The data come from the RNA Mapping Database (RMDB), library ARCHII.
Chemical mapping of a 207-nucleotide RNA with DMS.
The reactions ran in a buffer of 150 mM KOAc, 10 mM MgCl2 and 150 mM bicine (pH 8.5), at 24 C.
Values cover nucleotides 27 to 156.

RNA sequence: GGGAACGACUCGAGUAGAGUCGAAAACGUCCUCGCACUGGCUCGCUGACGGGCUAGGGUUCGCAAGAACCAGCGAGGUCAUUUACGUCAGAUAAGCCCCGUCGGUGUCACGACUGCGGGGACGAAAACCAAGUGACUCGCCGUCGUAGAGCGUGUUAUUACGAUGGUAGUUCGCUACCAUCGUAAUAAAAGAAACAACAACAACAAC
Reactivity to DMS in 0.01 (KOAc 150mM, MgCl2 10mM, bicine 150mM(pH8.5), 24C), signal-to-noise 1, nucleotides 027 to 156: c040g020u000c000c000u000c010g060c020a290c080u000g000g000c060u000c050g050c000u010g020a140c000g010g010g030c020u020a050g030g050g040u000u000c020g000c170a300a190g030a030a040c000c000a130g000c010g000a130g000g000u010c020a040u000u000u000a120c070g010u000c080a070g000a090u000a130a260g050c050c010c010c000g050u010c030g010g050u020g000u000c040a110c110g000a060c080u000g000c050g020g000g030g040a010c000g020a090a030a030a110c020c090a030a200g010u000g000a020c060u000c020g000c070c030g020u010c090g000u000a070g030a120g060c030g000u000g000u000u030
In probing experiments dimethyl sulfate is read out at A N1 and C N3, which are open when not base-paired. For DMS, 2,348 sequencing reads were counted.